An RNA of 207 nucleotides, treated with 2A3 and DMS and read out base by base.

RNA sequence: GGGAACGACUCGAGUAGAGUCGAAAAUGAGCCUUUACAAGUGAAUGGAUUUGAAGUUUUAAGAUUUGUACGUUGCAAAGGUGAGAAAAUUUUGGUAAAUAGUAAAGAACAGCCCUGUUACUAGCUGAUAGCCCAUUUGGAUAACUAGAUGAAGCGACUUCGAUUAUCUGUUCGCAGAUAAUCGAAGAAAAGAAACAACAACAACAAC
Reactivity to 2A3 in 0.01 (KOAc 150mM, MgCl2 10mM, bicine 150mM(pH8.5), 24C), signal-to-noise 2, nucleotides 027 to 156: u070g000a010g010c010c000u020u080u100a070c050a100a070g030u070g100a070a080u070g050g090a050u070u060u110g050a090a090g040u050u020u210u200a140a110g060a140u110u040u100g030u070a040c020g020u030u060g060c070a040a000a010g000g000u110g000a060g060a000a120a030a010u120u240u120u100g040g000u060a040a060a190u040a170g020u020a000a070a220g070a110a020c020a080g020c010c000c000u000g020u040u030a000c000u020a030g050c000u000g080a150u100a000g000c000c000c000a020u060u000u120g060g000a060u050a050a030c060u000a080g040a190u030g040a040a030g010c000g070a030
Reactivity to DMS in 0.01 (KOAc 150mM, MgCl2 10mM, bicine 150mM(pH8.5), 24C), signal-to-noise 1, nucleotides 027 to 156: u000g010a300g010c010c040u000u010u020a020c040a060a040g010u000g060a130a070u000g030g010a060u000u030u000g050a100a180g010u000u010u000u000a090a180g010a070u000u000u010g030u010a010c030g030u010u000g000c010a060a030a060g010g030u010g000a200g000a070a000a080a090u000u020u010u010g020g000u000a040a100a080u000a080g010u000a030a040a200g000a070a120c020a100g020c030c030c000u000g000u000u000a040c050u000a050g020c040u000g010a080u010a160g030c020c040c000a100u010u000u000g010g010a080u000a040a060c010u010a070g020a050u000g030a100a120g030c050g020a190
Values are in units of 0.01, from 0 to 300, in steps of 10. The data come from the RNA Mapping Database (RMDB), library OK3TST. Reactivities are given for positions 27 through 156.